Structure probing data (2A3 and DMS) for a 170-nucleotide construct.
The reactions ran in a buffer of 150 mM KOAc, 10 mM MgCl2 and 150 mM bicine (pH 8.5), at 24 C.
The DMS profile rests on 4,920 reads.
The data come from the RNA Mapping Database (RMDB), library 15KLIB.

RNA sequence: GGGAACGACUCGAGUAGAGUCGAAAAAAAAAGGAGCCACUUCUCUAUGUGCCCAUCCGGCUGGCUGGACACACUAGACACCUCCCAGGUCCUCGUGUGUACCUGGUUGAGAGGCUCAUUGCUUGUGAAGGCUGACCCUUCGGGGUCAGCAAAAGAAACAACAACAACAAC
Reactivity to 2A3 in 0.01 (KOAc 150mM, MgCl2 10mM, bicine 150mM(pH8.5), 24C), signal-to-noise 2, nucleotides 027 to 129: a000a000a000a000a000g150g000a000g010c050c020a000c050u140u010c000u100c020u030a010u020g010u000g010c000c000c000a000u020c000c010g300g030c150u210g000g000c000u000g000g000a000c000a000c000a050c040u000a000g000a000c010a000c040c000u040c000c000c000a000g060g020u080c030c000u090c150g080u140g050u010g070u130a030c000c000u000g000g000u030u150g010a020g000a020g010g000c010u000c020a030u040u110g000c100u090u120g010u070g060a000a000g070
Reactivity to DMS in 0.01 (KOAc 150mM, MgCl2 10mM, bicine 150mM(pH8.5), 24C), signal-to-noise 2, nucleotides 027 to 129: a090a280a080a000a150g080g000a030g020c010c000a120c090u020u050c030u050c000u000a000u030g040u040g000c030c000c020a010u000c000c030g080g040c150u040g020g160c090u010g000g060a060c020a000c000a020c100u000a100g000a030c260a110c140c050u000c030c060c000a050g000g020u000c040c010u020c300g030u000g010u030g010u070a000c000c010u000g000g000u000u050g010a060g000a080g010g000c000u010c050a170u060u050g040c110u010u010g040u080g010a140a020g050